[RMDB]
RNA sequence: GGGAACGACUCGAGUAGAGUCGAAAACAGACUCGAGCGAAAGCUCGGCGAAAGCCGCGUACAUGUGAAUGUCGGCCAGUGUACAGUCGACAGUUACUCUUCGGAGUAACAAUAGAAACAACAACAAGCUAUAUUACCCAUUCGUGGGUAAUAUAGCAAAAGAAACAACAACAACAAC
Reactivity to DMS in 0.01 (KOAc 150mM, MgCl2 10mM, bicine 150mM(pH8.5), 24C), signal-to-noise 5, nucleotides 027 to 126: c080a140g010a100c070u000c030g010a000g000c020g010a100a090a150g000c010u000c000g020g000c050g010a080a090a140g020c040c000g000c100g000u010a010c060a060u020g000u010g000a100a110u000g000u010c010g010g010c020c020a110g010u010g010u000a060c100a140g020u010c010g030a060c110a080g010u000u000a010c000u000c000u020u060c210g020g030a010g010u000a000a000c010a120a060u040a060g010a120a050a050c150a060a090c220a080a100c220a050a120
Reactivity to 2A3 in 0.01 (KOAc 150mM, MgCl2 10mM, bicine 150mM(pH8.5), 24C), signal-to-noise 9, nucleotides 027 to 126: c030a020g110a060c020u030c040g010a000g000c010g050a120a030a010g010c010u020c010g000g000c010g050a090a050a000g060c020c010g020c030g030u080a050c060a140u160g060u070g230a220a080u090g030u060c010g020g030c040c020a160g080u110g030u120a050c040a030g010u000c000g020a010c010a010g000u000u010a000c000u010c020u010u080c230g090g000a000g000u010a000a010c000a000a000u130a020g110a050a130a010c060a050a000c010a020a000c020a090a010